[RMDB]
RNA sequence: GGGAACGACUCGAGUAGAGUCGAAAAUGGACUUUUUACAGUUGCUACUUAUCCGGUUUUAACGCUGUUUUAUUGGCGCAAAGGUUUACGGAUAAACAACUAAUAAUUAAACCUUUUGUGUGCGAAAAUUGGACGUUUAGGUUCGCCUAAACGUCAACCUCAAUUUCUACUUCGGUAGAAAUUGAGGAAAAGAAACAACAACAACAAC
Reactivity to 2A3 in 0.01 (KOAc 150mM, MgCl2 10mM, bicine 150mM(pH8.5), 24C), signal-to-noise 2, nucleotides 027 to 156: u110g050g020a040c090u200u170u090u100u220a060c100a060g010u010u040g040c010u000a050c040u050u000a000u000c000c020g040g030u010u000u030u070a040a030c000g000c040u040g060u180u050u040u250a130u260u230g040g010c000g020c020a030a030a020g000g000u030u040u030a000c010g010g000a010u020a010a070a060c010a030a020c040u080a020a110u130a090a000u100u180a020a020a020c020c000u070u030u150u120g110u030g010u020g070c120g110a060a050a090a130u160u060g070g000a000c000g000u000u000u000a010g000g020u000u020c170g020c040c000u020a000a000a000c000g010u000c000a000a000

The record gives the reactivity of an RNA of 207 nucleotides to 2A3. 2A3 adducts were read by reverse transcription with SuperScript II with manganese. Values are in units of 0.01, from 0 to 300, in steps of 10.